[RMDB]
RNA sequence: GGGAACGACUCGAGUAGAGUCGAAAAAUUAAAUAGCUAAUCAACCGUGAGGGGAAAUUAGUUCUCGAGAGAGAGUGAAUUAGGGAAAGCCGGAUGCUUGGAAACUUGCUUGUCCGGUUUGGACGGGCGAUAUUCGUGAUUUCGAUCACGAAUAUCGAAAAGAAACAACAACAACAAC
Reactivity to DMS in 0.01 (KOAc 150mM, MgCl2 10mM, bicine 150mM(pH8.5), 24C), signal-to-noise 2, nucleotides 027 to 126: a080u010u010a030a030a100u040a160g000c010u000a010a040u010c010a210a300c040c010g000u020g020a170g000g030g000g010a110a120a030u000u000a020g020u000u010c020u000c020g000a150g000a130g000a050g000a100g010u000g010a080a110u000u000a090g010g000g010a110a050a060g000c000c000g030g010a020u010g010c030u000u010g000g000a130a050a100c040u000u010g010c030u010u010g010u000c000c000g000g000u010u000u000g000g000a110c070g000g000g000